The record gives the reactivity of an RNA of 177 nucleotides to DMS and 2A3. The RNA was probed in 150 mM KOAc, 10 mM MgCl2 and 150 mM bicine (pH 8.5) at 24 C. It was measured as part of the RMDB library TTRDEL. High DMS reactivity at an A or C suggests that its Watson-Crick edge is free.
RNA sequence: GGGAACGACUCGAGUAGAGUCGAAAAGAUAUGGAGCCAUCGGGAGCUGGUCCAUCGGAAACGAUGGAUCAGCAUCGAUCGAGUGGCUCCUAAGUCAAACGUCAAGCAGCUUCGGCUGCUUGACGAACGAACUAUAGCAGUUCGCUGCUAUAGUUCGAAAAGAAACAACAACAACAAC
Reactivity to DMS in 0.01 (KOAc 150mM, MgCl2 10mM, bicine 150mM(pH8.5), 24C), signal-to-noise 2, nucleotides 027 to 126: g000a020u000a000u010g000g000a020g020c000c010a020u010c000g010g000g000a020g020c000u010g000g010u000c000c010a000u000c000g000g000a010a030a030c010g010a010u000g000g010a000u000c000a000g040c000a050u000c210g000a010u020c010g000a020g010u000g020g010c000u000c000c000u000a000a040g000u000c010a100a140a230c010g000u000c000a000a010g000c000a020g010c000u000u020c250g020g010c000u000g000c000u000u000g000a000c000g000a010a080
Reactivity to 2A3 in 0.01 (KOAc 150mM, MgCl2 10mM, bicine 150mM(pH8.5), 24C), signal-to-noise 1, nucleotides 027 to 126: g010a000u010a010u050g010g000a000g010c000c000a000u000c000g000g000g000a020g010c000u010g000g000u020c000c010a000u010c000g000g000a010a010a000c010g000a000u000g000g000a000u000c000a000g000c000a010u020c000g000a000u000c010g000a170g300u080g010g000c000u000c000c000u000a000a000g000u000c010a080a050a070c020g000u000c000a000a000g000c000a000g000c000u100u260c300g190g000c000u010g000c000u000u000g000a000c000g000a000a000